RNA sequence: GGGAACGACUCGAGUAGAGUCGAAAAAUAAAUGUCCAAUUGGACUAGGUGAUCUCAACCGAUGUUUCGGACAGCGGUUCGAUUCCGCUCAACUCCACUUUUUGGGGUUGUAAUGGUUUCGACGGGGCAAGUUAUUAACCUUCGGGUUAAUAACUUGAAAAGAAACAACAACAACAAC
Reactivity to 2A3 in 0.01 (KOAc 150mM, MgCl2 10mM, bicine 150mM(pH8.5), 24C), signal-to-noise 3, nucleotides 027 to 126: a000u200a010a080a030u090g000u000c020c030a090a300u200u270g040g020a010c010u030a010g050g000u030g080a130u050c040u050c150a060a030c000c000g010a040u140g040u040u070u110c090g070g030a010c020a040g090c050g070g000u060u020c000g000a010u020u000c000c000g000c030u000c000a000a000c000u000c000c020a100c130u240u180u100u210u210g000g010g000g000u010u020g010u010a000a030u010g020g000u000u030u020c030g000a000c020g010g010g000g000
Reactivity to DMS in 0.01 (KOAc 150mM, MgCl2 10mM, bicine 150mM(pH8.5), 24C), signal-to-noise 5, nucleotides 027 to 126: a070u020a030a070a080u000g000u000c000c010a300a180u000u010g010g010a020c010u000a080g000g010u000g010a120u000c090u010c050a140a060c020c000g010a080u010g010u000u000u000c140g010g020a090c110a080g010c080g020g000u000u010c020g000a300u000u000c000c000g020c080u000c000a000a000c000u010c000c000a070c300u010u000u010u000u000g000g010g010g010u000u000g000u010a020a050u000g000g000u000u000u000c010g010a050c080g000g000g000g020
The data come from the RNA Mapping Database (RMDB), library RFMREP. This 177-nucleotide RNA was probed chemically with 2A3 and DMS. The reactions ran in a buffer of 150 mM KOAc, 10 mM MgCl2 and 150 mM bicine (pH 8.5), at 24 C.